[RMDB]
RNA sequence: GGGAACGACUCGAGUAGAGUCGAAAAACUGUAGAGUGUAUAGGUCAAGGUUUAGGGAGAGGCCGGUCCUGAUUAACUGGUUAGGGCAGGAGUUCCUCGAUUUCGUGGACUUCAGUAGGAACCCGGGAGAUCCCUUUCUAUUCGUAGAAAGGGAUCUAAAAGAAACAACAACAACAAC
Reactivity to DMS in 0.01 (KOAc 150mM, MgCl2 10mM, bicine 150mM(pH8.5), 24C), signal-to-noise 3, nucleotides 027 to 126: a090c070u000g010u010a110g010a080g030u000g010u010a070u010a090g010g000u000c050a060a080g000g000u000u010u000a110g010g020g010a110g010a090g000g000c050c040g010g020u010c020c020u010g000a060u000u000a080a140c170u000g000g010u010u000a040g010g000g000c040a080g000g000a090g000u000u010c010c010u000c040g010a170u000u000u000c040g020u000g000g000a070c020u000u000c040a070g030u010a030g000g000a060a120c030c000c020g010g000g010
Reactivity to 2A3 in 0.01 (KOAc 150mM, MgCl2 10mM, bicine 150mM(pH8.5), 24C), signal-to-noise 2, nucleotides 027 to 126: a000c080u110g030u130a020g030a030g130u110g060u120a090u110a190g060g000u090c040a050a070g080g000u040u100u110a050g060g030g000a050g010a020g040g000c040c000g050g010u040c000c000u080g050a120u120u130a170a180c070u120g050g050u050u050a030g020g000g000c040a020g050g000a020g030u120u110c000c010u000c010g030a130u020u180u160c080g010u070g000g010a030c010u010u000c030a060g010u050a040g170g000a040a030c030c020c020g000g030g000
The record gives the reactivity of an RNA of 177 nucleotides to DMS and 2A3. Source: RMDB library OK2TST, as collected in RNAgym. The DMS profile rests on 3,685 reads. 2A3 is a SHAPE reagent: it acylates the 2'-hydroxyl of flexible nucleotides of all four kinds. DMS adducts were read by reverse transcription with MarathonRT. Values cover nucleotides 27 to 126.